The record gives the reactivity of an RNA of 177 nucleotides to DMS and 2A3. Values cover nucleotides 27 to 126. The RNA was probed in 150 mM KOAc, 10 mM MgCl2 and 150 mM bicine (pH 8.5) at 24 C. High DMS reactivity at an A or C suggests that its Watson-Crick edge is free.

[RMDB]
RNA sequence: GGGAACGACUCGAGUAGAGUCGAAAACUGUUUUCGAUCAUAUAUCAGUUUCGGUAUAGCAAUCAUCAAAGAUCGCAUUUGACAGUUAUGUCAAAGGGACACACCCUUCGCGCGUCCUGGGGCGUGCCUAUUAGUGAAAUUUCGAUUUCACUAAUAGAAAAGAAACAACAACAACAAC
Reactivity to DMS in 0.01 (KOAc 150mM, MgCl2 10mM, bicine 150mM(pH8.5), 24C), signal-to-noise 9, nucleotides 027 to 126: c080u000g010u000u000u010u010c040g010a040u000c050a150u010a030u010a020u000c010a090g010u010u010u010c110g010g010u000a020u000a040g020c160a090a080u010c120a080u020c190a080a110a100g010a030u000c020g020c300a140u010u000u000g000a010c000a030g010u020u030a080u010g000u000c020a020a020a050g010g010g000a080c090a050c140a090c020c010c020u010u010c110g010c030g020c070g010u000c020c060u010g010g010g010g010c040g010u000g000c060
Reactivity to 2A3 in 0.01 (KOAc 150mM, MgCl2 10mM, bicine 150mM(pH8.5), 24C), signal-to-noise 9, nucleotides 027 to 126: c010u020g030u020u030u060u080c030g010a030u020c030a030u040a020u020a020u070c040a100g080u050u120u190c090g010g010u030a020u030a060g080c090a100a110u110c030a040u050c060a130a070a040g010a020u010c020g010c100a100u040u030u120g020a010c010a020g030u120u110a120u150g060u050c020a050a050a040g050g040g040a020c030a000c000a040c070c000c000u060u100c030g000c000g000c010g010u020c010c060u120g060g030g030g000c010g000u010g000c000